[RMDB]
RNA sequence: GGGAACGACUCGAGUAGAGUCGAAAAAGGGAAGUGGGCAAGGGUGACAGUGAGACUCAAGGGCCUGGCCGUGCGUCCCCGUGGGGCCCAGGAGGCUGCCCCAGAAGUGACUCCUGGCACUGCCCCGCUCAUUAGGACGUUUCGACGUCCUAAUGAGAAAAGAAACAACAACAACAAC
Reactivity to DMS in 0.01 (KOAc 150mM, MgCl2 10mM, bicine 150mM(pH8.5), 24C), signal-to-noise 4, nucleotides 027 to 126: a040g010g010g010a100a070g030u010g020g010g030c060a180a110g030g000g030u000g000a070c060a030g010u010g020a070g010a100c040u000c040a200a140g020g000g010c040c130u000g010g010c010c010g030u000g020c200g000u000c030c020c050c160g020u010g040g020g000g000c060c020c030a040g000g020a120g020g010c080u000g000c080c010c020c080a060g010a070a040g010u010g010a150c010u000c010c010u000g000g000c250a040c060u000g010c020c000c000c020g000
Reactivity to 2A3 in 0.01 (KOAc 150mM, MgCl2 10mM, bicine 150mM(pH8.5), 24C), signal-to-noise 3, nucleotides 027 to 126: a000g120g010g020a090a080g040u230g030g000g030c100a120a090g240g020g000u020g030a020c010a010g040u060g120a030g020a040c010u010c070a050a060g030g000g030c030c050u040g050g010c020c020g070u040g020c010g020u060c010c030c010c020g120u150g010g010g010g000c070c050c010a010g020g030a020g000g000c050u030g030c010c000c000c010a080g020a230a010g100u030g080a110c000u000c010c010u000g010g000c010a000c050u040g000c020c000c010c010g010